[RMDB]
RNA sequence: GGGAACGACUCGAGUAGAGUCGAAAAACUGACGGUACGCCGUCAGAACGGUAGAAAAGAUGGUUUGAAAACCACGCCUUCUACCAAUAUAGUAAAUAAAUAGGCGGAGCGGUCAUACGUGAGCGCAAAAACAUCCUUGGCUUCGGCCAAGGAUGAACAUGAAACUGUCGUUCGCGACAGUUUCAUGAAAAGAAACAACAACAACAAC
Reactivity to 2A3 in 0.01 (KOAc 150mM, MgCl2 10mM, bicine 150mM(pH8.5), 24C), signal-to-noise 1, nucleotides 027 to 156: a000c010u000g000a020c000g020g000u030a010c180g060c020c000g010u000c010a010g000a030a010c070g000g000u020a020g010a020a030a000a000g070a300u060g030g010u060u120u240g120a170a190a000a010c000c000a000c000g000c000c010u010u010c000u000a010c000c030a020a000u080a000u010a000g080u060a040a000a110u070a010a080a070u150a000g000g010c010g020g040a010g000c010g050g080u050c020a010u060a110c230g040u000g020a030g050c020g000c000a000a020a070a070a050c000a020u000c010c000u000u000g000g050c000u050u040c200g120g000c000c010a000a000g000g000a000u000g000a000a010